[RMDB]
This 207-nucleotide RNA was probed chemically with 2A3. For 2A3, 1,020 sequencing reads were counted.

RNA sequence: GGGAACGACUCGAGUAGAGUCGAAAAAGAUCGAUUACGAUCGAUCAAUGAUGCCCCUCACCCACCUCUGAAGAUCCCAGGUGGGCGAGGGAACGGAGCACGGGAUCACGAGCAGUACGCUGCUCGUAAAAGAACUAGACCUUCGGGUCUAGUUCAACACAGGUGUAGUGUUCGCACUACACCUGUGAAAAGAAACAACAACAACAAC
Reactivity to 2A3 in 0.01 (KOAc 150mM, MgCl2 10mM, bicine 150mM(pH8.5), 24C), signal-to-noise 1, nucleotides 027 to 156: a000g010a000u000c000g000a000u040u090a090c160g040a000u010c010g000a000u000c010a000a060u200g130a010u150g120c020c000c020c000u010c030a010c000c000c000a000c000c010u090c040u080g050a060a010g000a020u000c010c000c000a000g000g010u020g000g000g000c000g010a000g000g000g020a020a040c050g070g130a030g040c150a080c150g000g000g010a000u000c010a000c000g000a000g020c000a010g020u040a070c250g000c180u000g000c000u000c000g000u000a000a000a000a010g000a030a000c010u000a000g000a000c020c000u020u100c290g000g000g000u000c000u000a000g000u000u000c000a010a010
It was measured as part of the RMDB library M2RFPK. Conditions: 150 mM KOAc, 10 mM MgCl2 and 150 mM bicine (pH 8.5), 24 C.